[RMDB]
RNA sequence: GGGAACGACUCGAGUAGAGUCGAAAAACCUUUGUGUACAGCGCCUAUGGUGCCAGAAUAUAGACGACCCAUUGGGUCGUCCGUAUUCGAUAAUUCCAUAGGGUCUGCUGUACACUCUGGUAAAAUGCCUAAGGCAGAUUCGUCUGCCUUAGGCAAAACGUUUAUUGACGUUCGCGUCAAUAAACGUAAAAGAAACAACAACAACAAC
Reactivity to 2A3 in 0.01 (KOAc 150mM, MgCl2 10mM, bicine 150mM(pH8.5), 24C), signal-to-noise 2, nucleotides 027 to 156: a010c010c010u050u000u010g000u000g000u000a000c000a000g000c010g010c000c000u000a000u010g000g010u040g160c110c030a040g010a000a000u000a000u000a010g000a000c000g010a010c020c090c210a300u200u300g010g000g000u000c000g000u000c000c010g000u000a000u000u000c000g000a030u150a180a230u300u020c010c000a000u000a010g010g000g020u000c020u170g000c020u000g000u000a010c000a000c000u010c000u000g020g000u020a050a070a030a120u090g000c000c000u010a010a000g010g000c000a000g010a040u070u100c130g130u020c180u010g000c000c020u000u000a000g000g000c010a010a010a000
Source: RMDB library RNAMAK, as collected in RNAgym. The record gives the reactivity of an RNA of 207 nucleotides to 2A3. For 2A3, 1,387 sequencing reads were counted. The RNA was probed in 150 mM KOAc, 10 mM MgCl2 and 150 mM bicine (pH 8.5) at 24 C.